RNA sequence: GGGAACGACUCGAGUAGAGUCGAAAAGAUAUGGAAAACUUACAUUGUCCAAGGGAGACAUGCUCGACAGUCGGAAACGACUGUACCGAGCAACAGCUCCUUGGACAAUGUAAGUUUUCCUAAGUCACAUUCCAUGUAAGUUCGCUUACAUGGAAUGAAAAGAAACAACAACAACAAC
Reactivity to DMS in 0.01 (KOAc 150mM, MgCl2 10mM, bicine 150mM(pH8.5), 24C), signal-to-noise 5, nucleotides 027 to 126: g020a050u000a300u010g000g000a020a000a010a010c010u010u000a000c000a010u000u010g010u000c000c000a020a040g020g010g000a060g000a070c110a180u000g010c000u000c000g020a050c010a020g020u000c010g010g010a160a150a280c000g020a030c000u000g000u010a020c270c020g010a010g010c000a010a050c250a160g000c010u000c000c000u000u000g010g010a010c000a000a010u000g000u000a000a000g000u000u000u010u000c000c000u000a010a060g010u000c030a270